[RMDB]
RNA sequence: GGGAACGACUCGAGUAGAGUCGAAAAGGACUGGACCAGGACCACAGGUACCGCCGGACCCAUAUAAGGUACCAACCAGAAUAAGACAGAUACAUAAUGGGCAGCACACUGUAGCCAGUCAGAAACGCGUGCCUAGUCUACGGCACGAGAGAGCUAACACUGAGUAUCCAUUCGUGGAUACUCAGUGAAAAGAAACAACAACAACAAC
Reactivity to 2A3 in 0.01 (KOAc 150mM, MgCl2 10mM, bicine 150mM(pH8.5), 24C), signal-to-noise 2, nucleotides 027 to 156: g010g030a000c010u010g000g000a020c000c060a030g030g040a030c030c050a030c100a080g000g010u020a000c000c020g000c000c080g060g050a100c050c000c000a050u100a040u030a080a060g030g000u030a010c000c000a010a100c030c050a090g020a100a110u150a170a010g080a020c060a030g070a070u100a260c010a030u160a060a070u180g000g040g000c000a000g010c000a020c000a010c040u010g030u010a010g050c010c010a010g000u000c020a010g110a080a060a000c050g000c000g080u000g010c000c000u020a050g010u060c030u160a030c050g000g000c000a000c000g010a000g040a000g000a000g000c060u110a020a060
Reactivity to DMS in 0.01 (KOAc 150mM, MgCl2 10mM, bicine 150mM(pH8.5), 24C), signal-to-noise 1, nucleotides 027 to 156: g000g030a040c020u010g000g010a100c040c020a100g000g000a220c010c010a100c090a130g010g010u010a070c040c020g000c040c000g020g040a180c030c030c030a270u000a080u000a090a130g010g000u010a030c030c010a050a130c030c010a080g030a150a090u000a080a040g020a230c000a070g000a160u000a130c100a080u000a140a070u000g010g000g060c010a100g000c030a090c030a140c030u000g050u000a030g000c030c000a060g020u000c010a110g010a040a070a110c080g000c000g030u000g000c120c010u000a130g000u010c150u000a140c110g000g000c010a010c000g000a060g000a230g010a060g040c020u010a080a270
Chemical mapping of a 207-nucleotide RNA with 2A3 and DMS. Source: RMDB library OK3TST, as collected in RNAgym.